An RNA of 177 nucleotides, treated with 2A3 and read out base by base. 2A3 adducts were read by reverse transcription with SuperScript II with manganese.
[RMDB]
RNA sequence: GGGAACGACUCGAGUAGAGUCGAAAAGCUCGGAGACGAGCAAGGCUGACAAAACCCUGUCCCAACCUCCACGUGGUGUCGGCUGGAUAAUGCUGCAUUAUGUUGCAUUUAUCAACUGGGAAAAAAACAGGGCUCGCAUAUUCGUAUGCGAGCCCUGAAAAGAAACAACAACAACAAC
Reactivity to 2A3 in 0.01 (KOAc 150mM, MgCl2 10mM, bicine 150mM(pH8.5), 24C), signal-to-noise 1, nucleotides 027 to 126: g000c030u010c050g140g010a030g000a070c040g000a000g000c030a050a010g040g000c010u030g000a030c090a020a220a010a100c060c020c000u000g050u000c000c000c000a020a060c010c000u060c010c040a050c070g030u040g010g010u020g000u060c000g000g000c000u030g020g000a000u020a090a000u000g000c000u010g050c000a010u000u250a200u300g000u030u000g000c010a030u060u070u140a000u040c010a010a050c070u130g030g000g090a000a000a100a000a000a000a000